[RMDB]
RNA sequence: GGGAACGACUCGAGUAGAGUCGAAAAGAGCUUUUUUUCGAAAAAGCUCCGGCGCAAUGCCUAUGUGUACACUUCACAAGGGUUUGUGGAGGUCAAUGGCAAUACCAGCAAUCUUCGGAUUGCUGAAACCUAGCCAAAUGUUCGCAUUUGGCUAGGUAAAAGAAACAACAACAACAAC
Reactivity to DMS in 0.01 (KOAc 150mM, MgCl2 10mM, bicine 150mM(pH8.5), 24C), signal-to-noise 1, nucleotides 027 to 126: g010a000g020c020u000u010u000u000u040u000u020c120g010a040a020a020a010a010g010c020u000c000c090g000g010c140g020c110a100a050u000g000c010c010u010a070u000g000u000g000u000a050c080a100c010u000u000c000a000c000a020a100g040g010g010u010u010u000g020u000g000g010a000g020g000u000c050a040a050u000g000g020c020a040a140u000a130c160c000a000g030c000a010a010u000c000u000u010c140g020g000a020u000u000g010c010u000g000a020a080
Reactivity to 2A3 in 0.01 (KOAc 150mM, MgCl2 10mM, bicine 150mM(pH8.5), 24C), signal-to-noise 2, nucleotides 027 to 126: g000a000g020c000u000u020u000u030u000u000u140c120g030a030a000a000a010a000g010c020u010c000c020g110g000c120g030c120a120a140u110g000c000c010u100a120u140g180u010g040u090a010c190a120c100u020u020c010a010c020a030a070g300g120g000u100u130u020g000u000g010g020a030g000g010u030c020a010a100u060g000g000c000a040a000u030a140c020c030a020g000c000a010a000u020c010u020u020c210g130g000a000u000u000g010c000u000g000a030a010